RNA sequence: GGGAACGACUCGAGUAGAGUCGAAAAUGAGCUCGGUGAGAUGGCCUGGUUGCUGAAGACGCCAUAUUCCGUCUCCCUUUACCGAUGUGCCCCUUCUUGGGGCCAGGCCGUCGGCUGAUGAGGUUAGAGCAUACCGAUACUUCGGUAUCGGUAUGCUAAAAGAAACAACAACAACAAC
Reactivity to 2A3 in 0.01 (KOAc 150mM, MgCl2 10mM, bicine 150mM(pH8.5), 24C), signal-to-noise 3, nucleotides 027 to 126: u150g000a010g040c030u030c020g000g060u160g060a230g000a030u000g000g000c030c000u020g000g020u060u120g110c060u070g060a060a000g000a020c030g020c040c010a070u060a150u150u020c030c000g010u020c050u050c010c000c010u060u100u080a090c060c040g040a060u090g070u160g030c010c010c020c010u050u130c020u150u300g000g000g000g000c000c000a010g000g000c020c000g010u020c010g020g000c000u010g000a080u120g020a060g060g050u030u130a060g010
Reactivity to DMS in 0.01 (KOAc 150mM, MgCl2 10mM, bicine 150mM(pH8.5), 24C), signal-to-noise 2, nucleotides 027 to 126: u010g020a100g030c030u000c010g000g030u030g010a110g000a030u010g000g030c080c030u000g010g010u000u010g020c080u010g010a120a010g010a070c120g010c140c050a050u000a080u010u010c060c000g000u000c020u000c010c000c010u010u000u050a080c030c070g040a030u020g000u010g010c020c010c020c040u000u010c110u040u000g000g000g000g010c000c020a030g040g000c030c000g020u000c040g000g010c010u000g010a080u010g050a120g000g010u030u010a070g000